RNA sequence: GGGAACGACUCGAGUAGAGUCGAAAAAGAUAUGGAAAGCAGGGAGCAACAUUAGAUACAACAGCCAGGCUCGGAAACGAGCCUGGACAUGUAUAUUCUGUUGCGAAGAACUGCUUUCCUAAGUCAAGAUUUGAUUAACGUUCGCGUUAAUCAAAUCAAAAGAAACAACAACAACAAC
Reactivity to DMS in 0.01 (KOAc 150mM, MgCl2 10mM, bicine 150mM(pH8.5), 24C), signal-to-noise 2, nucleotides 027 to 126: a070g000a070u000a300u010g000g000a070a000a010g020c000a000g020g000g000a110g000c010a010a010c010a020u000u000a040g000a030u010a000c000a030a040c300a130g020c020c010a000g000g000c010u000c000g010g020a070a090a240c000g010a010g020c000c000u000g000g000a000c060a070u000g020u020a000u000a040u000u000c030u000g010u000u000g050c010g000a040a130g000a100a150c020u000g000c000u000u000u000c000c000u000a010a100g010u000c030a130a120
This 177-nucleotide RNA was probed chemically with DMS. For DMS, 1,346 sequencing reads were counted. The RNA was probed in 150 mM KOAc, 10 mM MgCl2 and 150 mM bicine (pH 8.5) at 24 C.